[RMDB]
RNA sequence: GGGAACGACUCGAGUAGAGUCGAAAACAUGUAUACUGAGAUGGAUUAUUAGUACAAUGCCCAAAUAGAGAGGAUUCUCCAUUAUUCUCAAAAGAAUCUUUUGGGGCAAGGAAAUGAAGCAGUUUGCACAGAGACCUUAGUGAAGUGCCAGAAGCAAUAAUUUAUUACUAUUCGUAGUAAUAAAUUAAAAAGAAACAACAACAACAAC
Reactivity to DMS in 0.01 (KOAc 150mM, MgCl2 10mM, bicine 150mM(pH8.5), 24C), signal-to-noise 2, nucleotides 027 to 156: c050a080u000g010u000a080u000a100c040u000g020a150g030a180u000g000g010a170u000u000a070u000u010a090g000u000a050c030a070a120u000g000c010c010c000a100a060a120u000a120g030a100g010a120g000g000a070u000u000c030u010c030c020a050u000u010a050u000u000c050u000c050a070a090a090a070g000a110a010u010c000u000u000u000u000g020g010g090g050c030a050a120g010g000a060a050a050u010g000a040a030g010c030a040g010u000u020u000g030c030a190c030a120g000a200g010a040c010c020u000u000a120g050u000g020a060a060g020u000g000c020c030a100g000a060a130g000c040a060a160
Reactivity to 2A3 in 0.01 (KOAc 150mM, MgCl2 10mM, bicine 150mM(pH8.5), 24C), signal-to-noise 2, nucleotides 027 to 156: c030a030u070g050u110a100u070a200c120u110g020a030g040a150u110g050g030a040u080u050a040u070u110a230g010u040a010c010a020a100u070g010c010c000c000a020a060a000u170a010g100a000g010a010g000g000a000u050u010c010u050c020c000a010u080u060a010u130u070c040u000c000a040a130a060a000g050a050a100u000c000u000u070u000u020g020g000g000g020c010a000a040g000g010a040a030a080u080g010a040a000g010c040a000g020u030u050u010g050c080a040c010a030g180a040g000a060c020c000u060u040a050g000u050g040a070a000g010u010g050c030c000a030g080a220a010g030c000a000a000

Chemical mapping of a 207-nucleotide RNA with DMS and 2A3. 2A3 adducts were read by reverse transcription with SuperScript II with manganese. For DMS the reverse transcriptase was MarathonRT.